Source: RMDB library M2RFPK, as collected in RNAgym. This 207-nucleotide RNA was probed chemically with 2A3. Reactivities are rounded to 0.1 and cut off at 0 and 3. The reactions ran in a buffer of 150 mM KOAc, 10 mM MgCl2 and 150 mM bicine (pH 8.5), at 24 C.
[RMDB]
RNA sequence: GGGAACGACUCGAGUAGAGUCGAAAAACGGAUGGUACGCCAUCCGACCAUUGGGUAGAAGCGUUCAAUCAGCACCGAGACGGUGCAGAUGGGAAAUUGCCCAUGAUACGCACCAUACGUGGUGCGAAAAAGCCAUCGGUGUUCGCACCGAUGGCAACUGUGAAAGAGUCUUCGGACUCUUUCACAGAAAAGAAACAACAACAACAAC
Reactivity to 2A3 in 0.01 (KOAc 150mM, MgCl2 10mM, bicine 150mM(pH8.5), 24C), signal-to-noise 2, nucleotides 027 to 156: a000c000g010g000a010u000g000g030u040a020c240g040c060c000a000u000c000c000g000a000c000c010a080u030u160g000g000g020u040a060g020a120a020g050c040g070u040u060c050a010a080u010c020a010g000c000a000c020c000g070a060g100a160c190g040g000u000g010c000a010g000a000u030g060g000g000a100a000a090u030u030g020c010c000c010a010u010g040a010u020a020c010g020c010a000c000c010a030u040a070c260g100u040g010g000u000g010c000g000a020a010a000a040a020g020c000c000a000u000c000g010g000u020g020u050u060c170g060c090a000c000c000g000a000u000g000g000c000a000a000